RNA sequence: GGGAACGACUCGAGUAGAGUCGAAAAGCCGCAAGGCGCGCCCCUCGGGGCGCUGCGCUGCAACGGCCUGCGAGCUCCCCAUCCGACCCGUCUUGAAACACGGACCAAGGAGUCUGACAUGCGUGCGGAUAGCGGGCUAGUUCGCUAGCCCGCUAUCAAAAGAAACAACAACAACAAC
Reactivity to DMS in 0.01 (KOAc 150mM, MgCl2 10mM, bicine 150mM(pH8.5), 24C), signal-to-noise 1, nucleotides 027 to 126: g000c040c000g000c160a000a080g000g000c000g050c000g040c000c000c020c000u060c290g090g120g000g000c140g000c040u040g000c020g000c140u000g050c000a170a180c090g000g000c000c000u000g000c030g130a060g000c040u000c120c020c000c120a190u070c000c120g000a040c010c070c000g150u000c010u000u000g000a090a070a100c300a020c100g000g000a040c220c090a040a150g000g030a090g000u000c050u000g000a150c100a110u050g000c000g000u040g000c060g000
Reactivity to 2A3 in 0.01 (KOAc 150mM, MgCl2 10mM, bicine 150mM(pH8.5), 24C), signal-to-noise 2, nucleotides 027 to 126: g000c000c010g000c030a000a080g040g020c010g000c000g010c030c000c000c000u120c230g000g000g010g000c030g000c050u060g040c090g030c000u070g020c000a010a040c040g040g000c000c000u000g030c010g000a020g030c000u100c000c010c020c000a020u020c000c030g060a080c010c050c010g000u020c030u000u130g030a080a100a000c030a000c060g040g000a030c050c000a130a050g090g020a090g040u010c030u070g030a020c020a090u120g030c000g000u030g000c020g020
Chemical mapping of a 177-nucleotide RNA with DMS and 2A3. The DMS profile rests on 964 reads. The reactions ran in a buffer of 150 mM KOAc, 10 mM MgCl2 and 150 mM bicine (pH 8.5), at 24 C.